[RMDB]
Structure probing data (DMS) for a 177-nucleotide construct.
The reactions ran in a buffer of 150 mM KOAc, 10 mM MgCl2 and 150 mM bicine (pH 8.5), at 24 C.
Reactivities are given for positions 27 through 126.
Reactivities are rounded to 0.1 and cut off at 0 and 3.
RNA sequence: GGGAACGACUCGAGUAGAGUCGAAAAGAUAUGGACUGACCCAGCAAACAAGCAGAGACUGCCGAAGAACUAGCUCGGAAACGAGCUAGGGAGGCAGUCUCUGCUUGCUAGCUGCAGUCCUAAGUCACAACAGUAGCAGGUUCGCCUGCUACUGUUGAAAAGAAACAACAACAACAAC
Reactivity to DMS in 0.01 (KOAc 150mM, MgCl2 10mM, bicine 150mM(pH8.5), 24C), signal-to-noise 2, nucleotides 027 to 126: g000a050u000a300u000g000g000a070c000u020g000a280c180c300c060a010g000c000a040a110a160c020a030a020g020c000a020g000a040g030a000c000u000g030c010c000g000a040a110g030a250a250c010u000a000g000c000u000c000g000g000a090a130a250c020g000a000g010c020u000a000g000g010g020a030g030g000c000a010g000u000c000u000c000u000g000c000u000u000g020c010u010a290g020c000u000g000c020a020g010u000c000c010u000a030a030g000u010c010a270